Source: RMDB library OK3TST, as collected in RNAgym. The record gives the reactivity of an RNA of 207 nucleotides to DMS and 2A3. Reactivities are rounded to 0.1 and cut off at 0 and 3. For 2A3, 6,365 sequencing reads were counted. Values cover nucleotides 27 to 156. DMS adducts were read by reverse transcription with MarathonRT.
RNA sequence: GGGAACGACUCGAGUAGAGUCGAAAAUGCGAACUCACAGCCGUACUCGCGGUGGACGACUUCGGUGUCCUCGCCUGCGAGCAGCUCCCAGUCACGGACACGCGUCUCGCCUUUGACCUUCGAGGCCUUGUUGAGCACUGUCUCGACAGGAAGAUCGCCAUGUAGGUCAAUUCGUUGACCUACAUGGAAAAGAAACAACAACAACAAC
Reactivity to DMS in 0.01 (KOAc 150mM, MgCl2 10mM, bicine 150mM(pH8.5), 24C), signal-to-noise 2, nucleotides 027 to 156: u000g060c050g000a070a050c040u000c040a110c100a150g020c010c030g040u010a060c040u000c000g010c050g000g040u000g000g020a050c050g010a090c030u000u030c260g040g030u010g000u000c020c010u000c030g020c030c020u000g010c020g020a080g040c000a120g000c050u000c000c010c010a160g020u000c100a070c040g010g010a100c030a080c070g030c110g030u000c020u010c020g040c040c040u000u010u000g000a100c000c000u000u000c000g000a080g050g000c020c030u000u000g020u000u000g020a090g000c020a200c000u010g000u000c020u000c020g030a020c010a050g010g020a130a070g020a100u000c070g020
Reactivity to 2A3 in 0.01 (KOAc 150mM, MgCl2 10mM, bicine 150mM(pH8.5), 24C), signal-to-noise 6, nucleotides 027 to 156: u150g000c020g020a060a030c010u020c060a080c050a050g010c020c020g070u090a080c020u000c030g000c010g020g040u090g020g020a020c060g030a040c120u100u090c210g150g030u050g010u000c010c010u010c060g060c030c050u170g010c010g000a000g000c030a020g010c020u020c020c040c000a020g090u100c040a010c100g030g030a040c030a010c100g080c040g050u000c030u030c060g030c000c020u080u080u130g030a080c000c010u040u040c060g020a040g010g010c000c000u100u160g020u020u070g020a020g020c030a040c300u130g060u100c000u030c000g010a010c020a010g000g030a020a030g070a050u090c070g000